Notes
Chemical mapping of a 207-nucleotide RNA with DMS and 2A3.
[RMDB]
RNA sequence: GGGAACGACUCGAGUAGAGUCGAAAACGAACUAAUCUAUAUAAGUUAGUAAUAAACAACAAUUGACGAACAAGUAUUGAGUUGAAACGAUCAGCGCCAGUUUCAUACAAUUCCUUGCCAGCGCCCUUAUUAGGCAAUGAAACACGAGCUACUUGGCAAGAAUGAGGUGAUUCGUCACCUCAUUCUUAAAAGAAACAACAACAACAAC
Reactivity to DMS in 0.01 (KOAc 150mM, MgCl2 10mM, bicine 150mM(pH8.5), 24C), signal-to-noise 1, nucleotides 027 to 156: c070g030a210a110c010u000a030a060u000c010u020a250u000a150u010a060a220g000u010u000a060g060u000a080a130u000a140a130a080c070a070a110c030a070a100u000u000g000a080c040g040a050a050c050a020a080g020u000a050u000u000g000a240g030u000u000g010a060a070a070c040g000a110u020c050a170g060c030g030c010c050a120g000u000u030u000c020a040u000a140c090a020a100u000u000c080c040u000u010g030c020c020a130g020c050g020c000c010c020u000u000a140u010u010a050g050g010c010a130a050u000g000a040a050a090c030a110c100g000a090g010c000u000a070c040u000u020g060g020c020
Reactivity to 2A3 in 0.01 (KOAc 150mM, MgCl2 10mM, bicine 150mM(pH8.5), 24C), signal-to-noise 2, nucleotides 027 to 156: c020g060a000a040c010u050a080a050u120c030u090a100u080a070u030a300a020g040u030u010a000g010u050a070a120u100a150a250a020c060a030a000c010a090a120u100u200g030a050c080g030a070a010c030a170a020g020u040a090u080u140g030a020g010u000u030g010a030a040a040c010g020a060u100c060a010g140c030g050c100c010a000g000u000u000u030c010a010u040a110c020a030a060u010u060c000c000u000u010g040c000c000a100g060c130g010c040c020c020u060u120a160u070u140a090g010g000c010a000a040u040g060a020a050a040c120a030c090g030a030g000c010u040a040c020u090u020g010g030c040

For DMS, 1,702 sequencing reads were counted. DMS adducts were read by reverse transcription with MarathonRT.